Structure probing data (2A3) for a 177-nucleotide construct. The 2A3 profile rests on 1,343 reads.
[RMDB]
RNA sequence: GGGAACGACUCGAGUAGAGUCGAAAAGACUGCGUGCACUAGAGACGAUAUCGAGCCGGAAAUUAAUCGAUAAUGUCUCUCGUAGUGGAUACGAUCCGGCAAGUAUCGACUACAUGUGCUCGUAGGAAUCCCACCGGAGUUUCGACUCCGGUGGGAUAAAAGAAACAACAACAACAAC
Reactivity to 2A3 in 0.01 (KOAc 150mM, MgCl2 10mM, bicine 150mM(pH8.5), 24C), signal-to-noise 1, nucleotides 027 to 126: g080a010c000u000g000c000g000u000g020c000a020c000u010a030g000a000g010a010c040g030a070u000a000u040c000g000a000g000c000c000g000g050a040a110a090u270u250a090a130u160c000g010a000u010a020a070u140g010u000c000u000c010u010c000g000u010a020g000u000g140g020a000u000a020c020g000a010u000c000c000g000g020c050a060a000g000u010a000u010c040g100a010c020u010a010c000a010u040g000u000g000c000u000c000g010u000a000g000g000a000